The record gives the reactivity of an RNA of 177 nucleotides to DMS and 2A3. The DMS profile rests on 3,302 reads. The RNA was probed in 150 mM KOAc, 10 mM MgCl2 and 150 mM bicine (pH 8.5) at 24 C.
RNA sequence: GGGAACGACUCGAGUAGAGUCGAAAACUGACCUUGUACAAUAUUCCACUCAUAGGUGUCUUCAGGCCUAUGGAGAGCAGCUUGCGUGGGCUGGGCCUGCAGUACCUGGUUUGCAUAGAUGAUUGGCAGCUAUUCUAUCGUUCGCGAUAGAAUAGCUAAAAGAAACAACAACAACAAC
Reactivity to DMS in 0.01 (KOAc 150mM, MgCl2 10mM, bicine 150mM(pH8.5), 24C), signal-to-noise 3, nucleotides 027 to 126: c060u000g010a090c050c050u000u000g000u000a080c070a070a100u000a110u000u000c090c030a100c040u000c050a060u020a030g010g010u000g010u000c040u000u000c020a020g020g010c040c000u000a050u010g020g010a080g020a120g000c040a050g020c070u000u010g030c110g010u000g010g010g020c050u000g000g020g010c040c000u000g000c040a030g010u000a040c020c010u000g000g010u000u000u000g010c160a090u000a090g000a090u000g010a120u000u010g010g030c170
Reactivity to 2A3 in 0.01 (KOAc 150mM, MgCl2 10mM, bicine 150mM(pH8.5), 24C), signal-to-noise 2, nucleotides 027 to 126: c060u060g070a070c010c030u020u130g030u080a060c070a050a050u000a120u170u110c010c010a040c020u050c050a150u060a120g000g030u030g050u000c000u020u020c010a010g040g010c000c040u190a210u190g060g060a100g020a010g020c070a000g000c020u150u180g050c080g110u300g050g080g010c000u010g040g000g000c000c000u000g020c000a000g010u010a010c010c000u010g000g040u040u040u050g100c040a090u060a090g110a090u100g000a060u070u080g040g000c010